This 177-nucleotide RNA was probed chemically with DMS and 2A3.
[RMDB]
RNA sequence: GGGAACGACUCGAGUAGAGUCGAAAACAGCGGGCCCGGCCGCGGGUGAACAGGUUCGGCGCGAUCACCAGAUAGCCCGCGCCGGUGAGGAUGUCGAGCUGGUGCCGCAGGUCGGCGUUCAUGCCGAACCGUACCCAGUAUUCGUACUGGGUACGGUAAAAGAAACAACAACAACAAC
Reactivity to DMS in 0.01 (KOAc 150mM, MgCl2 10mM, bicine 150mM(pH8.5), 24C), signal-to-noise 3, nucleotides 027 to 126: c080a120g020c020g000g000g000c130c010c000g010g010c060c040g040c040g000g000g010u010g000a040a070c210a250g020g000u010u010c010g000g010c010g010c030g000a150u000c050a120c100c120a090g010a040u020a290g000c000c000c010g020c020g000c010c000g000g000u020g020a070g000g010a080u010g010u000c000g000a050g000c010u000g010g010u010g000c020c010g020c000a070g000g000u000c010g000g010c040g000u000u010c040a140u000g030c010c010g000a100
Reactivity to 2A3 in 0.01 (KOAc 150mM, MgCl2 10mM, bicine 150mM(pH8.5), 24C), signal-to-noise 2, nucleotides 027 to 126: c020a010g090c020g010g010g050c000c000c000g000g020c090c080g000c030g020g020g000u100g060a110a120c150a300g000g000u030u020c000g040g000c000g020c010g040a040u060c010a010c070c010a050g070a220u080a010g010c040c020c000g000c000g010c000c000g000g030u030g030a030g030g020a020u040g010u050c000g000a020g070c010u000g040g050u030g030c000c000g020c010a040g000g070u000c000g000g000c010g010u030u050c050a110u260g070c020c020g030a030
It was measured as part of the RMDB library OK2TRN. DMS adducts were read by reverse transcription with MarathonRT.